Structure probing data (2A3 and DMS) for a 177-nucleotide construct. It was measured as part of the RMDB library OK2TRN. The 2A3 profile rests on 1,196 reads. The RNA was probed in 150 mM KOAc, 10 mM MgCl2 and 150 mM bicine (pH 8.5) at 24 C. The DMS profile rests on 959 reads.
RNA sequence: GGGAACGACUCGAGUAGAGUCGAAAAGUACCAUGCAUGGUACAUGCUAGCGUGCGGAUCGUACGCACUCUAGGAUCCAUGGAUCCUCAGACGUACUACGAUCUCUAGUGCACGCGCUCGCACUAGAUGUUUCUACGGGGUUCGCCCCGUAGAAACAAAAAGAAACAACAACAACAAC
Reactivity to 2A3 in 0.01 (KOAc 150mM, MgCl2 10mM, bicine 150mM(pH8.5), 24C), signal-to-noise 1, nucleotides 027 to 126: g010u010a000c000c000a060u150g170c040a120u180g100g000u100a030c010a030u070g040c020u080a020g000c040g020u020g000c020g020g040a040u040c010g060u010a000c000g000c000a000c030u000c000u000a000g020g000a000u000c010c030a130u130g170g000a020u010c000c060u030c090a030g000a010c150g000u020a000c020u000a000c020g030a030u020c020u040c080u130a100g110u090g160c020a010c020g000c030g020c010u040c040g070c000a060c060u050a060g030a300
Reactivity to DMS in 0.01 (KOAc 150mM, MgCl2 10mM, bicine 150mM(pH8.5), 24C), signal-to-noise 1, nucleotides 027 to 126: g010u020a030c000c000a080u010g000c290a100u000g010g020u030a050c040a060u000g020c080u000a070g010c030g030u010g020c010g000g000a010u000c000g040u000a000c190g020c090a000c050u000c000u000a000g010g000a010u000c000c000a040u020g010g020a000u000c000c000u000c160a000g030a060c190g010u000a060c120u000a020c010g000a000u000c000u020c220u000a080g020u000g000c010a000c020g000c010g010c070u000c090g000c010a100c150u010a150g000a180